[RMDB]
RNA sequence: GGGAACGACUCGAGUAGAGUCGAAAAGCCAGGCCGGUGCAGGCUAUAGCUGCCAUCGGCUGACCUAGAGAAGACACAUCAGCUGAUCCUUUGGACCCGGCGACUUGAGACAGAAGUUCUGGGCUUCUCCUCCUGCGGCCUAGCUCUGAGACAAUGAUAGUAAUAGUACGUUCGCGUACUAUUACUAAAAAGAAACAACAACAACAAC
Reactivity to 2A3 in 0.01 (KOAc 150mM, MgCl2 10mM, bicine 150mM(pH8.5), 24C), signal-to-noise 4, nucleotides 027 to 156: g030c010c020a020g030g030c010c000g060g020u090g010c050a040g120g030c090u180a130u150a200g050c050u030g030c040c020a010u010c010g010g000c000u000g000a020c010c050u080a040g020a030g030a230a040g070a060c080a010c010a120u070c030a010g000c010u030g020a070u140c030c000u070u080u160g080g000a090c020c040c000g030g020c030g030a040c040u040u050g030a040g030a090c020a040g080a100a010g030u100u060c030u100g040g030g020c020u060u010c010u030c010c000u020c000c010u050g010c010g020g010c000c000u020a000g040c020u040c040u070g070a070g010a060c080a060a110u120g020a080
Reactivity to DMS in 0.01 (KOAc 150mM, MgCl2 10mM, bicine 150mM(pH8.5), 24C), signal-to-noise 3, nucleotides 027 to 156: g030c020c010a080g030g070c010c000g090g030u000g020c050a090g010g020c090u020a100u000a160g000c020u000g000c070c070a090u000c020g010g000c000u020g010a010c020c020u000a130g020a140g020a120a110g020a150c070a060c060a140u000c030a100g020c030u000g000a160u000c010c030u000u000u000g020g000a070c010c010c020g060g000c040g020a090c050u010u000g010a230g000a180c040a090g010a090a040g020u000u000c030u000g020g040g030c020u000u000c030u010c010c010u000c030c000u000g020c040g030g010c000c000u000a060g020c040u000c010u000g010a210g010a050c060a040a140u000g020a250